Source information: This 207-nucleotide RNA was probed chemically with 2A3. For 2A3 the reverse transcriptase was SuperScript II with manganese. For 2A3, 454 sequencing reads were counted.
RNA sequence: GGGAACGACUCGAGUAGAGUCGAAAAUCCCGUAAAACGAUCGGAAAACAUAACUGCCAACACGCAGUUUGCAUACGCUGCUUAAUUAAUUAAGUAGCCGUUCCAGCCACUGAGCCUGCGCGGUGGUGAGUGAACGUCAUUUUGCAGGAUAGGCCAAGUUGUGAAGAUGCUUCGGCAUCUUCACAACAAAAGAAACAACAACAACAAC
Reactivity to 2A3 in 0.01 (KOAc 150mM, MgCl2 10mM, bicine 150mM(pH8.5), 24C), signal-to-noise 1, nucleotides 027 to 156: u000c050c010c000g000u040a140a150a010a070c160g010a040u230c050g030g040a000a010a070a010c000a020u220a010a000c000u030g030c030c100a110a000c050a100c100g000c000a000g000u000u010u000g020c030a050u120a160c020g020c010u000g090c000u080u000a130a130u190u200a150a130u060u010a000a140g000u000a000g030c000c000g000u000u000c000c010a070g000c000c000a000c000u000g000a000g000c010c000u000g000c000g000c000g000g000u020g010g000u040g000a010g050u300g020a000a020c000g000u080c020a030u000u160u160u090g010c010a000g000g000a030u040a070g020g000c000c000a210a000